[RMDB]
RNA sequence: GGGAACGACUCGAGUAGAGUCGAAAAAGGAAAAUGGAAUCCGAUGCCCUGAAUGCGGUGGAGAAUUCGGGGAAGCCUACGAAUUUAACCUGAUGUUCAAAACCACGAUUGGACCAGGCACUGGAAGCUCUCGAUCGAACUUCGGUUCGAUCGAGAGAAAAGAAACAACAACAACAAC
Reactivity to 2A3 in 0.01 (KOAc 150mM, MgCl2 10mM, bicine 150mM(pH8.5), 24C), signal-to-noise 1, nucleotides 027 to 126: a010g170g030a000a220a000a220u300g140g010a070a080u000c000c000g000a130u260g020c000c000c000u000g000a000a020u000g060c020g150g000u010g020g000a030g100a030a000u000u000c000g000g000g000g000a040a030g110c000c000u090a110c010g000a170a070u030u070u220a160a070c000c050u110g120a090u100g050u040u070c000a030a110a000a000c100c100a080c020g070a130u060u060g000g000a000c040c000a000g000g000c000a130c030u000g020g130a120a000g080
The record gives the reactivity of an RNA of 177 nucleotides to 2A3. Conditions: 150 mM KOAc, 10 mM MgCl2 and 150 mM bicine (pH 8.5), 24 C. Reactivities are given for positions 27 through 126. It was measured as part of the RMDB library OK1LIB.